[RMDB]
RNA sequence: GGGAACGACUCGAGUAGAGUCGAAAAUCUGUCUUGGAGGUAGCCAACUCAUGCUCCUCGCGCAACUUGGCCUCGGCUUCCUUCAACUGAUCCACAUGGCGGCGCAGCACGUCCAGUUGGCUCAACACCUCAUCGAGUCGUUCGCGACUCGAUGAGGAAAAGAAACAACAACAACAAC
Reactivity to 2A3 in 0.01 (KOAc 150mM, MgCl2 10mM, bicine 150mM(pH8.5), 24C), signal-to-noise 1, nucleotides 027 to 126: u050c000u020g070u060c030u080u100g180g020a060g000g040u140a000g020c050c020a080a020c110u090c080a080u090g030c020u010c020c060u050c000g000c030g020c080a010a210c110u070u120g010g000c010c010u080c070g000g010c000u010u030c000c000u000u030c000a020a020c070u020g000a040u070c020c030a060c030a150u060g070g000c020g010g030c140g000c050a060g000c050a000c030g070u010c030c050a050g000u000u020g040g020c010u000c040a050a000c010a070
An RNA of 177 nucleotides, treated with 2A3 and read out base by base.